Structure probing data (2A3 and DMS) for a 177-nucleotide construct.
[RMDB]
RNA sequence: GGGAACGACUCGAGUAGAGUCGAAAAGAUAUGGAUGUGUGGAGCUUUUGACGAAGUUCGGAAACGAAUACUUCGAUAAGCUCCCACAUCCUAAGUCAAAAGUUGGCUAGGUUCGCCUAGCCAACAAGACUAGCUCUUAGUUCGCUAAGAGCUAGUCAAAAGAAACAACAACAACAAC
Reactivity to 2A3 in 0.01 (KOAc 150mM, MgCl2 10mM, bicine 150mM(pH8.5), 24C), signal-to-noise 2, nucleotides 027 to 126: g010a000u050a010u140g000g020a000u010g020u060g140u300g040g000a000g040c030u050u180u230u240g140a090c030g010a020a010g010u010u020c000g000g030a060a050a020c020g000a020a040u100a210c020u010u000c000g010a040u050a140a010g000c000u020c000c000c000a000c010a000u000c000c000u000a010a010g020u000c030a000a000a140a130g010u010u000g000g000c010u000a000g060g000u040u130c210g090c090c000u000a010g000c030c000a000a000c000a000a000
Reactivity to DMS in 0.01 (KOAc 150mM, MgCl2 10mM, bicine 150mM(pH8.5), 24C), signal-to-noise 3, nucleotides 027 to 126: g010a020u000a300u000g000g000a000u000g020u010g010u010g040g000a010g000c010u000u000u000u000g020a240c110g000a000a010g010u000u000c000g000g010a100a080a170c010g010a050a080u010a070c000u000u000c020g020a120u010a010a020g000c000u000c000c000c000a010c010a000u010c000c000u000a010a030g000u000c050a090a090a080a120g020u000u000g000g010c000u000a000g000g010u000u000c240g030c010c000u010a000g010c000c000a000a010c010a040a080

Notes: The 2A3 profile rests on 3,608 reads.